The data come from the RNA Mapping Database (RMDB), library OK1LIB.
The record gives the reactivity of an RNA of 177 nucleotides to DMS and 2A3.

RNA sequence: GGGAACGACUCGAGUAGAGUCGAAAAUGGCAAAGAGGGGACGUUUUGCGACGGAAGGGUUCCCUGGGAAACUCGGAUUUCUUCUGUACGGUCCGCCUGGCACGGGAAAAACGUCGUUUGUAAAAGCGUUUUAUCCUCACUUCGGUGAGGAUAAAACAAAAGAAACAACAACAACAAC
Reactivity to DMS in 0.01 (KOAc 150mM, MgCl2 10mM, bicine 150mM(pH8.5), 24C), signal-to-noise 1, nucleotides 027 to 126: u050g020g000c050a000a050a210g020a140g000g000g010g000a010c030g030u010u000u000u010g010c080g040a040c060g000g000a030a030g000g020g020u050u000c000c000c020u000g020g000g000a110a190a070c010u040c300g020g020a040u000u000u000c000u000u070c010u000g000u000a010c080g030g000u050c040c070g000c020c000u000g000g000c050a100c000g000g030g000a010a010a020a070a050c060g020u000c000g000u000u050u020g000u010a060a170a080a080g000c160
Reactivity to 2A3 in 0.01 (KOAc 150mM, MgCl2 10mM, bicine 150mM(pH8.5), 24C), signal-to-noise 2, nucleotides 027 to 126: u050g060g000c040a010a030a030g120a100g070g010g000g030a000c040g010u010u040u120u050g010c040g020a000c030g030g050a000a030g000g000g100u020u060c020c000c000u010g020g030g000a120a120a040c040u020c050g040g030a010u010u070u040c010u060u000c040u000g000u040a120c030g030g000u030c010c000g030c020c030u030g030g020c040a050c080g060g000g010a000a130a000a000a000c000g020u020c050g030u090u050u080g100u080a040a070a020a010g060c020
Annotation
The 2A3 profile rests on 926 reads.